Structure probing data (2A3 and DMS) for a 177-nucleotide construct. It was measured as part of the RMDB library OK1LIB. For DMS the reverse transcriptase was MarathonRT. 2A3 adducts were read by reverse transcription with SuperScript II with manganese.
[RMDB]
RNA sequence: GGGAACGACUCGAGUAGAGUCGAAAAAGUCGCCAGCUACACAGAUUUUAAAACUUGAAGAGGCGACGGAAAGGGUGCACUUGUACCAUCCGUCACUGACAGAAAAGGUGAAAGGUAGCUUCGCCAGAGUCGGGGAUGGAUUCGUCCAUCCCCGACUAAAAGAAACAACAACAACAAC
Reactivity to 2A3 in 0.01 (KOAc 150mM, MgCl2 10mM, bicine 150mM(pH8.5), 24C), signal-to-noise 1, nucleotides 027 to 126: a000g110u050c030g010c000c000a000g000c000u000a000c070a000c030a020g050a040u000u000u090u300a090a050a120a010c000u000u160g030a090a000g000a140g230g000c000g000a000c000g050g000a150a000a010g080g080g000u050g000c090a260c300u120u280g030u050a000c000c070a000u000c000c000g030u040c020a010c070u070g200a000c000a080g210a090a090a120a000g010g010u020g060a190a040a010g060g020u020a070g010c090u020u080c000g010c020c000a040g000
Reactivity to DMS in 0.01 (KOAc 150mM, MgCl2 10mM, bicine 150mM(pH8.5), 24C), signal-to-noise 1, nucleotides 027 to 126: a290g000u040c040g000c000c150a110g000c000u050a070c010a120c040a030g000a300u000u000u140u000a000a000a120a300c050u030u000g000a190a100g040a300g000g000c120g000a000c000g000g010a000a160a000g000g010g030u000g000c060a160c300u080u110g000u000a050c000c040a030u000c000c000g050u000c000a030c000u090g000a120c040a000g000a090a000a190a040g000g000u010g000a120a010a090g000g000u000a000g040c000u000u000c190g010c050c080a190g000